This 207-nucleotide RNA was probed chemically with 2A3. The RNA was probed in 150 mM KOAc, 10 mM MgCl2 and 150 mM bicine (pH 8.5) at 24 C.

RNA sequence: GGGAACGACUCGAGUAGAGUCGAAAAGAAAGAAAGAAAGUUCAUUGUUUAUCGGAAACUUUAAACUAUAACCAUUCAAACUUUUCCAGAAGUUAGUUUGAAUAGAAAUUAAAAAGAAACUUCUGAUUAACCUUAUCAUGCUUCGGCAUGAUAAGAACUUCCCAAAAUAGUUCGCUAUUUUGGGAAGAAAAGAAACAACAACAACAAC
Reactivity to 2A3 in 0.01 (KOAc 150mM, MgCl2 10mM, bicine 150mM(pH8.5), 24C), signal-to-noise 1, nucleotides 027 to 156: g010a000a040a000g050a000a050a050g090a010a170a000g120u050u040c040a040u100u080g040u040u140u090a110u200c060g040g020a030a080a120c000u000u000u080a090a110a000c000u050a020u120a300a050c050c010a010u000u030c000a030a000a000c010u010u000u040u040c120c000a000g000a030a000g010u000u030a000g000u020u000u000g010a020a040u070a200g050a000a020a080u300u300a020a000a010a050a000g000a000a020a000c000u000u000c000u000g000a000u060u030a040a020c000c000u010u010a000u000c000a000u000g000c000u000u000c000g180g000c010a000u000g000a000u000a010a010g000a000a000
Values cover nucleotides 27 to 156.